[RMDB]
The record gives the reactivity of an RNA of 177 nucleotides to DMS. Source: RMDB library M2PK90, as collected in RNAgym. Conditions: 150 mM KOAc, 10 mM MgCl2 and 150 mM bicine (pH 8.5), 24 C. Reactivities are given for positions 27 through 126.

RNA sequence: GGGAACGACUCGAGUAGAGUCGAAAAACAUAGGUUGGGCCAUAGGCGCUGCGGUUCAUCAUCUUGCCCUCGCCAGGACCGCUCCCGUUCUACUACUUCGCGUCGCGGAUACCGGGUUGGAAAACAAUAUAGCCUUGUGUUUCGACACAAGGCUAUAAAAAGAAACAACAACAACAAC
Reactivity to DMS in 0.01 (KOAc 150mM, MgCl2 10mM, bicine 150mM(pH8.5), 24C), signal-to-noise 1, nucleotides 027 to 126: a080c090a100u010a020g000g020u000u010g010g000g000c070c080a100u010a130g010g000c050g010c120u000g000c050g010g000u010u010c060a070u000c110a080u000c100u000u000g010c030c010c010u000c040g000c010c060a100g000g000a040c020c020g000c040u000c010c020c060g000u000u020c030u000a120c090u000a070c040u020u000c030g000c090g010u000c040g020c040g000g020a100u000a100c050c010g000g000g000u000u000g020g000a020a060a060a070c150a050a150